[RMDB]
RNA sequence: GGGAACGACUCGAGUAGAGUCGAAAAUAGUUUUACGCAGGGUAACGUUCACAACGGUGCCACCGGCGUCGGCCCGGGGGUGUCGCUGAAUAGCAUAAACGGCAUGCUCAAGCUCGCCGACUCUGGACACCCUGCAUACUUUCGAGUAUGCAGGGUGAAAAGAAACAACAACAACAAC
Reactivity to DMS in 0.01 (KOAc 150mM, MgCl2 10mM, bicine 150mM(pH8.5), 24C), signal-to-noise 2, nucleotides 027 to 126: u000a020g020u060u010u040u000a000c210g050c040a140g040g000g000u070a060a070c110g000u020u000c070a180c090a050a050c000g000g000u000g000c000c020a030c000c040g010g000c140g000u010c030g040g040c090c000c000g000g000g000g000g000u000g000u020c040g000c040u020g000a110a140u040a030g020c180a060u000a060a040a140c020g000g020c020a040u010g020c020u040c200a070a050g020c090u000c090g040c000c000g000a020c080u060c070u010g010g000a300
Reactivity to 2A3 in 0.01 (KOAc 150mM, MgCl2 10mM, bicine 150mM(pH8.5), 24C), signal-to-noise 3, nucleotides 027 to 126: u120a010g070u010u030u060u100a060c050g040c050a050g060g000g000u040a140a000c080g040u080u050c160a040c030a120a030c020g020g060u010g000c000c000a030c000c000g000g000c040g010u050c060g020g020c000c000c000g000g000g000g000g000u030g030u060c020g000c010u030g070a110a130u080a090g070c110a040u110a050a140a020c010g050g020c010a040u070g020c020u080c070a070a090g020c040u060c070g010c010c000g030a040c020u010c000u030g020g000a010